[RMDB]
Background
The data come from the RNA Mapping Database (RMDB), library M2PK50. The record gives the reactivity of an RNA of 177 nucleotides to 2A3 and DMS. For DMS the reverse transcriptase was MarathonRT. For 2A3 the reverse transcriptase was SuperScript II with manganese. The reactions ran in a buffer of 150 mM KOAc, 10 mM MgCl2 and 150 mM bicine (pH 8.5), at 24 C. For 2A3, 15,288 sequencing reads were counted.
RNA sequence: GGGAACGACUCGAGUAGAGUCGAAAACUACAUAAAUUCGUUUAUGUAGCAUCGGGGACGCGCAGACUCCCCGUCAGACGGCUCUAGCCUACCAAGCUCUGCACUCAACAGCUUUCGAGCUGUUGAAAGAAGACUAAACAUUCGUGUUUAGUCUUCUAAAAGAAACAACAACAACAAC
Reactivity to 2A3 in 0.01 (KOAc 150mM, MgCl2 10mM, bicine 150mM(pH8.5), 24C), signal-to-noise 6, nucleotides 027 to 126: c000u010a000c000a000u010a010a020a010u070u080c100g040u040u020u010a010u010g000u000a000g020c030a090u170c010g000g000g010g000a010c080g080c010g000c240a000g000a030c000u000c000c010c010c000g010u000c010a030g010a040c030g020g010c010u050c140u250a050g010c010c010u010a060c040c050a010a010g010c030u000c000u010g010c010a020c030u020c000a000a010c000a000g030c000u070u080u220c240g140a000g000c000u000g000u000u000g000a000a000
Reactivity to DMS in 0.01 (KOAc 150mM, MgCl2 10mM, bicine 150mM(pH8.5), 24C), signal-to-noise 8, nucleotides 027 to 126: c010u000a000c000a010u000a010a010a030u000u010c170g010u000u000u000a000u000g000u000a000g000c080a100u010c010g020g010g000g000a010c130g010c150g010c010a010g010a020c040u000c010c010c000c000g010u000c130a050g010a200c210g010g000c010u000c170u010a090g020c010c000u000a240c190c070a030a030g010c080u000c000u000g000c010a220c280u000c000a000a000c000a000g000c000u000u000u010c170g010a010g020c000u000g010u000u000g000a000a070